The record gives the reactivity of an RNA of 207 nucleotides to 2A3 and DMS.
RNA sequence: GGGAACGACUCGAGUAGAGUCGAAAAAAUAAUUGGCGAAACUCGUUUCGCGUUGGCUGCCUAAUUCAAGGAAGUAGCGUGCCUUCAUGCUAAGGGUUUGAUAUCUGCUAAAACCCGGUGCAUUCAUAAGACUUUUGCUUGUUCGCAAGCAAAAGAACGAAGUAAGAGUCUUCGGACUCUUACUUCGAAAAGAAACAACAACAACAAC
Reactivity to 2A3 in 0.01 (KOAc 150mM, MgCl2 10mM, bicine 150mM(pH8.5), 24C), signal-to-noise 3, nucleotides 027 to 156: a000a000u250a010a080u080u070g020g000c000g020a010a080a090c040u030c060g070u000u040u010c020g000c010g010u010u040g030g020c010u030g000c000c010u100a140a120u130u150c100a120a060g090g020a040a010g040u070a000g040c040g030u020g020c010c000u050u090c020a020u030g000c000u020a010a040g010g000g000u020u000u010g040a040u100a130u260c100u160g030c050u090a030a020a000a010c000c010c000g000g020u030g000c000a020u010u120c010a010u030a190a120g060a130c000u010u000u010u000g000c000u000u010g010u030u080c120g000c090a000a000g000c000a010a000a000a010g000a020a010
Reactivity to DMS in 0.01 (KOAc 150mM, MgCl2 10mM, bicine 150mM(pH8.5), 24C), signal-to-noise 2, nucleotides 027 to 156: a080a090u000a050a100u000u000g030g030c000g000a180a100a040c030u000c150g020u010u010u000c020g010c020g020u000u000g020g000c070u000g060c020c040u010a090a090u000u000c100a050a060g010g010a040a040g030u000a140g040c080g000u000g010c020c010u000u010c060a030u010g020c050u040a240a250g010g000g000u000u010u000g000a160u000a050u010c070u000g010c120u000a140a000a050a030c000c000c000g000g020u000g000c010a060u000u020c050a140u010a090a130g020a110c010u010u000u000u010g020c000u000u000g010u000u000c300g050c020a010a000g000c010a000a000a010a010g000a050a170
For DMS, 3,590 sequencing reads were counted.
The reactions ran in a buffer of 150 mM KOAc, 10 mM MgCl2 and 150 mM bicine (pH 8.5), at 24 C.
For DMS the reverse transcriptase was MarathonRT.